[RMDB]
RNA sequence: GGGAACGACUCGAGUAGAGUCGAAAAUCGGAGCAGAUGUGGCUCUGGGUGCUACAGUGACCCCUGCACCAGGUCCCCAGCUGGGCUGUGAGGCAGGGCUGCUCGGGCCCCAUGGCCCUGGUGGAGGUGAGUCUCGGAUAUUCGUAUCCGAGACUCAAAAAGAAACAACAACAACAAC
Reactivity to DMS in 0.01 (KOAc 150mM, MgCl2 10mM, bicine 150mM(pH8.5), 24C), signal-to-noise 1, nucleotides 027 to 126: u040c060g000g000a020g000c000a040g000a040u070g000u040g000g020c020u080c010u000g000g000g000u030g000c050u020a050c210a110g000u010g000a170c040c030c030c000u000g000c000a020c010c000a220g010g000u030c000c100c030c040a140g000c190u040g000g000g000c020u000g030u040g000a080g000g000c050a120g030g000g000c080u000g010c010u030c030g030g000g000c010c000c010c000a020u000g000g000c010c000c000u050g000g000u030g000g000a180g060g040
Reactivity to 2A3 in 0.01 (KOAc 150mM, MgCl2 10mM, bicine 150mM(pH8.5), 24C), signal-to-noise 2, nucleotides 027 to 126: u130c040g030g030a040g000c030a090g050a300u210g100u170g150g000c000u000c000u070g050g000g020u110g030c040u090a130c010a150g050u050g130a100c000c000c000c060u010g030c010a010c010c000a000g010g050u140c030c050c000c000a110g060c150u220g000g020g000c040u050g090u070g180a100g070g000c060a080g020g050g040c030u020g010c000u010c000g060g050g000c000c020c000c000a000u070g010g000c000c000c000u000g000g010u000g010g050a080g000g060
An RNA of 177 nucleotides, treated with DMS and 2A3 and read out base by base. The data come from the RNA Mapping Database (RMDB), library OK1LIB.